[RMDB]
This 177-nucleotide RNA was probed chemically with 2A3 and DMS. For 2A3, 3,174 sequencing reads were counted. The data come from the RNA Mapping Database (RMDB), library OK2TST. Conditions: 150 mM KOAc, 10 mM MgCl2 and 150 mM bicine (pH 8.5), 24 C.
RNA sequence: GGGAACGACUCGAGUAGAGUCGAAAAGAGACCUGUAUCGCCUGUGGUCAAUGUUCGAUGGUCUGUCCUCACGCCGUUAUCCGCAUGAAGGCCUUCCAAGAUAAGAGCGUCUUUGAGAAUGCCCCAGGCUACGUAUCCAUUUCGAUGGAUACGUAGCAAAAGAAACAACAACAACAAC
Reactivity to 2A3 in 0.01 (KOAc 150mM, MgCl2 10mM, bicine 150mM(pH8.5), 24C), signal-to-noise 3, nucleotides 027 to 126: g070a010g020a030c000c010u010g070u090a110u080c040g050c050c030u080g040u110g050g060u060c080a040a060u110g010u050u080c040g020a060u070g000g050u030c030u030g080u080c000c010u010c020a040c040g030c020c000g000u010u050a070u090c010c000g070c080a050u100g100a090a060g040g030c000c000u020u020c010c010a030a020g030a100u110a120a090g030a030g140c050g030u000c010u060u120u090g120a180g020a100a040u070g010c000c010c000c000a040g080
Reactivity to DMS in 0.01 (KOAc 150mM, MgCl2 10mM, bicine 150mM(pH8.5), 24C), signal-to-noise 3, nucleotides 027 to 126: g000a230g020a070c020c010u010g030u000a110u000c100g010c040c010u000g030u010g010g010u010c080a070a090u000g010u000u000c040g000a110u000g010g000u000c030u000g010u000c030c010u010c060a090c130g000c030c040g010u020u000a070u010c060c060g020c090a100u000g010a090a090g000g010c040c040u000u000c030c030a060a080g000a080u010a100a120g010a070g030c140g020u000c020u010u010u000g020a120g000a050a070u000g000c030c010c030c080a110g010